[RMDB]
RNA sequence: GGGAACGACUCGAGUAGAGUCGAAAAACGAGGACCACUACGGUGGUCCUCGAACCUGCUCUGCAACAAUAUUUCAUCAGUGGUGAACUCCAAAAUCUACUGGUGAAAUGUAGUUGCGUAGGAGGAAAGACGAGAGUACCUUCGGGUACUCUCGUCUAAAAGAAACAACAACAACAAC
Reactivity to 2A3 in 0.01 (KOAc 150mM, MgCl2 10mM, bicine 150mM(pH8.5), 24C), signal-to-noise 1, nucleotides 027 to 126: a010c000g020a000g000g000a020c010c010a000c030u060a020c300g090g000u000g020g000u010c000c010u000c000g000a000a000c000c000u030g020c000u020c030u040g000c000a000a000c000a000a000u000a000u000u010u000c020a000u000c000a000g020u000g050g010u060g050a070a060c140u170c120c070a020a070a020a180u060c020u050a000c000u020g000g000u000g000a000a000a000u000g000u000a040g020u010u000g040c000g020u060a000g000g070a000g000g040a070a070
Structure probing data (2A3) for a 177-nucleotide construct. The RNA was probed in 150 mM KOAc, 10 mM MgCl2 and 150 mM bicine (pH 8.5) at 24 C. Values cover nucleotides 27 to 126.